RNA sequence: GGGAACGACUCGAGUAGAGUCGAAAAGUAGUCGAGCUUUCAUACUCUUUUGAGUAUGUUUAGAUCUCGAACAGCGCCAAGAGAUCUAGCGGUGCUGUUGUCUUUUGACUAAGCUCUUGACUACGAAGGGUAACACAUACUUCGGUAUGUGUUACCCAAAAGAAACAACAACAACAAC
Reactivity to DMS in 0.01 (KOAc 150mM, MgCl2 10mM, bicine 150mM(pH8.5), 24C), signal-to-noise 3, nucleotides 027 to 126: g000u000a000g030u000c000g010a000g000c040u020u000u010c000a010u000a010c010u000c010u020u010u080u030g000a020g020u000a000u000g010u020u000u050a060g000a080u020c110u010c170g040a050a020c000a020g010c000g040c000c000a100a260g010a190g010a080u030c150u030a080g000c300g010g010u000g020c000u010g030u010u000g010u050c040u030u000u010u020g010a070c160u020a040a050g000c000u000c020u050u020g010a000c010u000a020c010g010a140a080
Reactivity to 2A3 in 0.01 (KOAc 150mM, MgCl2 10mM, bicine 150mM(pH8.5), 24C), signal-to-noise 4, nucleotides 027 to 126: g020u000a000g000u000c000g000a000g000c000u040u100u000c010a000u000a000c000u010c020u060u140u230u300g000a000g010u000a000u000g020u000u000u030a030g010a080u030c010u010c050g000a000a000c010a000g010c010g020c000c010a120a020g090a050g030a220u150c080u170a070g130c080g050g000u000g000c000u010g000u000u030g030u030c050u050u130u100u060g040a080c030u010a010a000g000c000u000c000u080u240g000a010c010u000a000c000g000a020a020